[RMDB]
RNA sequence: GGGAACGACUCGAGUAGAGUCGAAAAGUUGACCCUCGAGAAAAGGUGGCUCAAGUUUAAUCUAAGAACUGUGCCUGAGCGGCAGGCAGCCAGGUAGUGUAGUGUGGGACACGCCGUAAACCCAUCCAGGAGGGUGUUAAUUCGUUAACACCCUCCUAAAAGAAACAACAACAACAAC
Reactivity to DMS in 0.01 (KOAc 150mM, MgCl2 10mM, bicine 150mM(pH8.5), 24C), signal-to-noise 1, nucleotides 027 to 126: g020u010u020g010a080c030c000c010u010c030g000a100g010a100a100a160a080g020g020u000g010g000c000u000c080a060a070g000u000u000u000a060a110u020c150u020a110a120g000a040a020c060u000g010u010g000c010c000u000g000a150g010c070g010g020c020a060g010g000c060a080g010c000c020a030g010g030u010a060g020u030g010u000a040g000u020g000u020g000g020g010a030c090a030c070g000c050c020g000u010a090a080a120c020c000c020a110u030c190c150